[RMDB]
RNA sequence: GGGAACGACUCGAGUAGAGUCGAAAAGACGUGGCACCCACAAUGGUCGAAACGUGAUACCUCGCUUAAGGGAUGUGGGUGCCACGUCAGCGAAGAUUAAGUCAAAAGUGGUUUUGGAGGCCAAAACGACUAGCACCAUGUUCGCAUGGUGCUAGUCAAAAGAAACAACAACAACAAC
Reactivity to 2A3 in 0.01 (KOAc 150mM, MgCl2 10mM, bicine 150mM(pH8.5), 24C), signal-to-noise 1, nucleotides 027 to 126: g010a010c020g000u000g010g000c000a000c010c040c000a000c000a000a150u190g090g040u150c030g050a100a060a060c080g030u020g020a020u140a150c000c090u120c040g070c100u120u020a150a080g000g020g040a020u040g000u050g020g040g010u000g020c020c000a000c010g000u010c010a010g010c000g040a020a010g020a060u060u180a110a000g020u040c020a020a000a070a180g070u040g060g170u030u030u140u110g170g030a060g000g070c010c010a000a000a000a090c100
Reactivity to DMS in 0.01 (KOAc 150mM, MgCl2 10mM, bicine 150mM(pH8.5), 24C), signal-to-noise 1, nucleotides 027 to 126: g010a000c000g050u000g010g020c010a010c000c000c020a010c010a070a130u010g010g020u000c040g020a090a050a100c160g020u020g010a090u000a090c230c010u000c060g000c130u000u040a110a110g000g010g010a160u000g010u000g000g010g010u000g020c000c000a000c000g000u010c010a000g020c010g010a070a040g020a050u000u030a070a120g010u000c030a010a030a060a060g000u000g000g010u000u000u000u000g010g040a180g070g010c020c050a040a020a060a050c120
Background
An RNA of 177 nucleotides, treated with 2A3 and DMS and read out base by base. High 2A3 reactivity points to a flexible backbone, as in loops and unpaired stretches. DMS adducts were read by reverse transcription with MarathonRT.